[RMDB]
RNA sequence: GGGAACGACUCGAGUAGAGUCGAAAAGAUAUGGAGUCCCAGACAGCACUACCCACCGAGAGUGUCGGAAACGACACGUUCGAGGUGUCGAGACUCCUAAGUCAAACCCUGUACUUCGGUACAGGGACAAUGUGCUUAUGUUCGCAUAAGCACAUUGAAAAGAAACAACAACAACAAC
Reactivity to DMS in 0.01 (KOAc 150mM, MgCl2 10mM, bicine 150mM(pH8.5), 24C), signal-to-noise 8, nucleotides 027 to 126: g010a020u000a070u000g000g000a020g010u000c000c010c010a240g030a010c030a060g030c270a130c210u010a230c130c080c090a150c030c000g000a100g000a060g010u000g000u010c000g020g010a010a010a050c000g010a000c000a000c010g010u000u000c020g000a160g010g010u000g020u000c010g000a040g000a020c000u000c000c000u000a010a090g010u000c020a150a120a200c010c000c000u000g010u000a000c000u000u010c220g030g000u000a000c010a010g000g010g010a020
Reactivity to 2A3 in 0.01 (KOAc 150mM, MgCl2 10mM, bicine 150mM(pH8.5), 24C), signal-to-noise 6, nucleotides 027 to 126: g010a010u040a020u090g000g000a010g010u020c030c050c060a030g010a010c010a010g110c090a040c150u300a160c110c040c030a040c030c000g010a010g010a010g020u010g000u000c000g000g000a030a000a000c000g000a000c000a000c000g010u020u020c050g040a190g090g150u030g010u010c000g000a040g000a020c000u000c000c000u010a010a000g020u010c040a060a030a300c010c000c010u000g000u000a010c010u040u080c300g150g000u010a000c000a000g000g000g010a010